[RMDB]
RNA sequence: GGGAACGACUCGAGUAGAGUCGAAAAAACACGUGCACCAGCUUCCAAGCUUUCUCCCUCCCGAACCGCCCUGAUUAGUGUGUGAAGAACUGGCACAUCUCCACGAGGUUGUAAGGAAGGUGAAAAGCGUGUGAUUCAAAUUCGUUUGAAUCACACGAAAAGAAACAACAACAACAAC
Reactivity to DMS in 0.01 (KOAc 150mM, MgCl2 10mM, bicine 150mM(pH8.5), 24C), signal-to-noise 4, nucleotides 027 to 126: a060a060c090a070c090g000u000g000c080a070c040c050a060g000c040u000u020c010c050a090a080g010c030u000u020u000c060u010c000c010c020u000c030c000c000g020a080a060c050c050g000c030c010c030u000g000a060u010u010a070g020u020g000u010g020u010g010a140a080g030a050a050c050u000g020g000c060a040c070a080u010c020u010c040c020a070c060g020a100g000g010u010u000g000u040a070a100g020g020a070a050g030g000u010g010a070a050a040a070g010
Reactivity to 2A3 in 0.01 (KOAc 150mM, MgCl2 10mM, bicine 150mM(pH8.5), 24C), signal-to-noise 5, nucleotides 027 to 126: a000a000c090a010c040g050u090g000c020a030c030c000a020g010c020u080u000c030c020a080a020g020c040u060u070u010c050u020c020c000c000u020c010c010c000g010a040a020c020c010g020c000c000c010u030g030a100u050u100a060g030u030g010u020g010u040g110a080a080g040a130a070c030u050g080g000c020a010c000a030u040c020u000c020c000a060c060g000a050g050g000u020u010g010u040a030a040g030g040a020a020g070g020u080g040a030a040a000a010g040
An RNA of 177 nucleotides, treated with DMS and 2A3 and read out base by base.
For 2A3 the reverse transcriptase was SuperScript II with manganese.
The data come from the RNA Mapping Database (RMDB), libraries RFM100 and RFMREP.